This 177-nucleotide RNA was probed chemically with DMS.
DMS adducts were read by reverse transcription with MarathonRT.
RNA sequence: GGGAACGACUCGAGUAGAGUCGAAAAAGGAGAACAAAUCCACUCGGUUUGACAUGGAACCUUGACCCGUUACUCGUGGAUCAUUUUAGCUGUUCUAUUACGUAUCUGAGGAGAGGUAUUAUUAAACUACAGCCAAAGGUUUCGACCUUUGGCUGUAAAAAGAAACAACAACAACAAC
Reactivity to DMS in 0.01 (KOAc 150mM, MgCl2 10mM, bicine 150mM(pH8.5), 24C), signal-to-noise 1, nucleotides 027 to 126: a080g000g010a100g010a120a050c070a040a080a140u000c000c040a080c050u010c090g030g040u000u010u000g010a150c110a030u010g010g000a060a020c020c040u010u010g010a100c030c000c000g010u000u010a040c060u000c170g000u010g020g000a100u010c010a090u010u010u000u010a070g030c220u010g060u000u030c060u000a100u000u010a130c110g000u000a020u000c030u000g000a060g010g010a290g040a030g010g010u000a070u000u010a160u000u010a030a010a040c150